[RMDB]
RNA sequence: GGGAACGACUCGAGUAGAGUCGAAAAAAAUCUGGCUUGCCAAAUUCACCACUAGAGGCAAUGCCCUACUUCUAGCUACUGGGUCUCAGGAGAACCCAAAUCCACUUACAUGUGGCUGAGGCGGGAGCCAUAUCUGCAUGAGCCUUCCUGCAAGUGAUCUAAAUAAGAGGUUCGCCUCUUAUUUAGAAAAAGAAACAACAACAACAAC
Reactivity to DMS in 0.01 (KOAc 150mM, MgCl2 10mM, bicine 150mM(pH8.5), 24C), signal-to-noise 2, nucleotides 027 to 156: a080a050a080u000c030u010g010g030c030u000u000g060c020c000a060a040a140u010u010c070a080c080c050a110c040u010a060g010a100g010g010c030a080a070u020g020c050c040c010u000a040c000u000u000c020u000a040g010c030u010a050c060u000g020g030g030u010c030u000c020a110g000g010a170g010a080a070c030c010c030a020a080a130u010c040c050a030c020u010u000a090c060a050u000g010u000g020g020c060u000g010a100g020g020c030g030g010g010a120g010c020c050a090u010a050u000c010u000g000c030a110u000g010a070g020c010c010u000u000c010c030u010g000c040a050a060g010u000g010a180
Reactivity to 2A3 in 0.01 (KOAc 150mM, MgCl2 10mM, bicine 150mM(pH8.5), 24C), signal-to-noise 3, nucleotides 027 to 156: a030a000a020u100c040u040g020g000c020u030u030g010c010c020a110a190a300u250u190c100a120c090c010a030c080u110a040g020a050g090g000c010a010a040u150g010c000c000c000u090a140c020u020u060c010u020a040g020c040u050a050c050u090g000g020g030u000c020u010c060a050g070g050a100g080a110a070c010c000c010a030a040a030u040c020c010a020c040u110u190a130c080a120u230g010u030g030g020c020u070g030a020g070g040c000g000g030g000a010g000c000c010a030u040a060u070c100u110g030c060a030u070g010a010g050c010c020u040u040c010c000u020g010c010a070a060g030u040g080a060

The record gives the reactivity of an RNA of 207 nucleotides to DMS and 2A3.
Values cover nucleotides 27 to 156.
For DMS, 4,174 sequencing reads were counted.
The data come from the RNA Mapping Database (RMDB), library OK3TST.